An RNA of 177 nucleotides, treated with 2A3 and DMS and read out base by base.
RNA sequence: GGGAACGACUCGAGUAGAGUCGAAAAGUCGCAAGGAGUUCGCGACAGGACUCCAACGCUAGGAGGUUCGCAUUCUAGCCAGCGAACAAUGGAUAUCGAAUACUGUUCAACGGUAUCCUGAACAGAAGGCAUGCAUCUCGUUCGCGGGAUGCAUGCCAAAAGAAACAACAACAACAAC
Reactivity to 2A3 in 0.01 (KOAc 150mM, MgCl2 10mM, bicine 150mM(pH8.5), 24C), signal-to-noise 1, nucleotides 027 to 126: g070u030c000g020c080a080a190g020g040a060g010u000u000c010g020c020g300a150c060a030g000g010a010c000u000c000c030a000a060c040g000c010u020a010g000g030a110g030g100u120u070c090g020c010a040u080u000c000u000a010g010c030c000a000g000c000g000a050a090c010a000a120u080g000g000a020u010a000u020c000g040a080a100u170a230c140u180g240u180u140c060a090a060c000g000g000u000a000u000c000c050u110g050a110a000c030a100g150a160a100
Reactivity to DMS in 0.01 (KOAc 150mM, MgCl2 10mM, bicine 150mM(pH8.5), 24C), signal-to-noise 2, nucleotides 027 to 126: g000u010c030g010c030a300a250g000g090a010g000u020u000c000g030c300g010a190c270a100g000g030a090c000u000c000c000a220a090c130g000c000u000a000g000g000a000g020g010u010u030c090g000c020a120u000u000c050u000a000g000c000c250a150g070c000g000a020a050c070a140a070u000g000g000a000u000a000u000c000g000a170a090u020a120c230u000g030u030u050c200a140a180c010g020g000u000a000u000c000c000u040g000a080a210c200a040g030a130a110

DMS adducts were read by reverse transcription with MarathonRT.
For 2A3, 1,285 sequencing reads were counted.